[RMDB]
RNA sequence: GGGAACGACUCGAGUAGAGUCGAAAAGGCGAGCACAAUGUUGAUGGUGGACAACGCAACUGGCGUCAAGGCGCUGGUGGCCGCCAUCGAGCGCGAGCCCGGACGCGCCGCGGUCCCCUGGUGGCCACCCAACGAGGGUAUUCGUACCCUCGUUGGGAAAAGAAACAACAACAACAAC
Reactivity to DMS in 0.01 (KOAc 150mM, MgCl2 10mM, bicine 150mM(pH8.5), 24C), signal-to-noise 4, nucleotides 027 to 126: g000g000c020g000a190g040c050a080c100a120a050u010g010u010u010g020a040u010g010g020u010g010g000a040c050a080a080c220g000c140a080a090c060u000g000g020c030g020u000c040a090a120g020g000c020g000c060u010g000g020u000g010g000c000c000g000c010c010a030u010c050g010a090g030c070g010c020g020a210g000c020c020c020g010g010a160c090g010c040g000c030c020g010c090g000g000u000c020c000c010c080u000g000g010u000g020g000c040c120a130
Reactivity to 2A3 in 0.01 (KOAc 150mM, MgCl2 10mM, bicine 150mM(pH8.5), 24C), signal-to-noise 3, nucleotides 027 to 126: g020g010c010g020a060g030c060a030c030a120a300u240g080u200u130g080a040u010g030g070u010g020g000a020c030a190a030c250g030c090a050a050c060u040g060g000c010g000u030c050a120a150g090g000c000g000c020u020g010g040u050g010g020c000c000g000c000c000a020u030c030g030a050g000c080g000c010g010a020g000c010c000c000g000g020a020c040g030c010g010c020c010g030c020g020g050u050c000c010c000c030u060g060g010u060g030g010c000c000a040